[RMDB]
RNA sequence: GGGAACGACUCGAGUAGAGUCGAAAACUCUUGGCCUCUCCCUCAUGGUGGCAAGAUGGCAGCCAUAGCUCCAAGUAUGAUGUCCCCAUAGCACGUCCUACUCAGGAACGUAAAGGAGGGGGUGCCAGGGAGCAGUUCCCCAACCCCCACUCCCUUACGUAUACUGCCCUUUCGAGGGCAGUAUACGAAAAGAAACAACAACAACAAC
Reactivity to 2A3 in 0.01 (KOAc 150mM, MgCl2 10mM, bicine 150mM(pH8.5), 24C), signal-to-noise 2, nucleotides 027 to 156: c010u010c000u060u060g020g000c020c150u160c010u020c070c000c030u000c040a020u040g000g020u030g010g000c010a040a070g100a270u100g020g020c150a030g000c040c140a250u140a100g010c030u000c000c010a050a070g060u060a250u170g190a140u080g020u010c020c020c000c030a020u030a020g140c130a010c030g000u010c000c000u050a170c100u080c240a020g090g010a130a060c000g000u050a050a160a010g080g000a000g020g000g010g000g000u010g010c010c010a040g000g000g030a010g040c060a020g010u000u000c030c010c000c000a000a170c000c020c000c000c020a000c050u020c030c000c010u020u050a050
An RNA of 207 nucleotides, treated with 2A3 and read out base by base. The 2A3 profile rests on 838 reads. Values cover nucleotides 27 to 156. Source: RMDB library OK3TST, as collected in RNAgym. The reactions ran in a buffer of 150 mM KOAc, 10 mM MgCl2 and 150 mM bicine (pH 8.5), at 24 C.